[RMDB]
RNA sequence: GGGAACGACUCGAGUAGAGUCGAAAAGAACAGAAUGCCGCACUGGCUGCCCUGAUGAGAACAGACCCCUGACUAGCGUCGAAACAUCAACAGUGCGGGCUGUUGGUGUCGGCAGCCACUAAAAGAAGCAUAUGAUGGUAUUCGUACCAUCAUAUGCAAAAGAAACAACAACAACAAC
Reactivity to DMS in 0.01 (KOAc 150mM, MgCl2 10mM, bicine 150mM(pH8.5), 24C), signal-to-noise 2, nucleotides 027 to 126: g000a190a120c080a090g000a100a130u030g000c000c000g060c040a080c050u080g000g000c020u000g000c080c000c060u000g030a050u000g000a090g000a040a110c110a110g010a040c060c080c020c020u030g030a060c060u010a140g020c210g030u000c040g000a150a050a040c010a020u000c000a050a010c100a050g000u020g000c130g000g000g000c000u020g000u000u000g000g000u000g010u020c080g030g000c030a040g000c050c030a050c050u000a040a040a100a120g020a090a070
Reactivity to 2A3 in 0.01 (KOAc 150mM, MgCl2 10mM, bicine 150mM(pH8.5), 24C), signal-to-noise 3, nucleotides 027 to 126: g010a100a030c090a030g060a100a090u040g020c000c000g040c050a030c060u030g020g000c000u030g030c010c030c040u070g030a130u040g100a060g120a120a000c020a020g070a080c000c010c020c030u070g030a080c070u120a000g020c050g060u000c040g070a090a110a030c000a020u040c040a000a040c000a040g070u040g230c060g000g010g000c000u010g000u050u020g000g030u050g070u110c040g030g000c030a010g000c000c000a060c030u080a000a040a040a030g130a070a000